[RMDB]
RNA sequence: GGGAACGACUCGAGUAGAGUCGAAAAACAGCCAUCCUCUAGUAAGUUUGUAAAAUGUCUGGUGAGAUGUGGGAACUUAUUGGAAACAACAAUUUGCUUAAUAGCAUCCUAGUGCCAGCGGAACAACGGUAGAAACAACUUUCGAGUUGUUUCUACCAAAAGAAACAACAACAACAAC
Reactivity to DMS in 0.01 (KOAc 150mM, MgCl2 10mM, bicine 150mM(pH8.5), 24C), signal-to-noise 3, nucleotides 027 to 126: a070c120a100g030c050c060a050u010c030c040u000c020u000a050g020u000a010a020g010u000u000u000g010u030a050a060a110a040u010g010u010c030u000g010g030u020g020a080g010a020u010g000u010g000g010g000a030a060c040u000u000a040u000u000g000g010a100a090a100c260a060a080c090a040a070u010u010u010g010c060u000u020a050a080u030a100g020c000a040u000c060c060u000a110g030u030g000c030c020a040g000c050g000g010a060a070c150a040a040c140
Reactivity to 2A3 in 0.01 (KOAc 150mM, MgCl2 10mM, bicine 150mM(pH8.5), 24C), signal-to-noise 4, nucleotides 027 to 126: a000c060a020g080c010c000a020u020c000c020u040c040u040a040g060u030a060a150g020u050u100u080g200u090a100a100a050a070u090g040u000c040u030g100g050u090g110a100g020a040u040g030u060g040g050g080a000a040c020u010u030a030u040u050g030g040a120a100a050c040a040a000c020a020a070u040u030u130g080c020u080u120a100a030u100a160g010c000a020u000c010c030u040a040g010u020g120c040c010a030g010c020g040g020a110a000c060a010a080c140